[RMDB]
RNA sequence: GGGAACGACUCGAGUAGAGUCGAAAAACGGAAGCCUGAGCACCGUGCUGUUGGAACAAAUGCACCCGUGCUAGUGUCAACGACGUUGUCGUUGGCGCGACGUCAUCAAAUUGCGGGAAAUGUCCAGGACGAAAUGGGAUACCAAGCACGGCAGCACCCCUUACGACAAGUUCGCUUGUCGUAAGGGAAAAGAAACAACAACAACAAC
Reactivity to 2A3 in 0.01 (KOAc 150mM, MgCl2 10mM, bicine 150mM(pH8.5), 24C), signal-to-noise 3, nucleotides 027 to 156: a000c080g040g060a030a010g010c010c010u080g040a030g000c010a020c010c000g030u010g010c020u070g100u180u080g030g000a130a010c020a070a140a030u100g060c020a060c000c000c000g010u000g050c030u050a040g000u010g000u000c000a000a000c000g010a010c240g150u070u290g020u080c000g000u000u000g010g000c030g000c000g010a000c040g040u120c020a100u010c050a080a130a200u180u220g010c040g010g000g000a050a050a070u170g000u000c020c030a060g120g040a070c130g030a050a050a090u120g010g050g020a040u050a100c000c000a000a000g000c000a000c000g010g000c000a000g010c000a020c000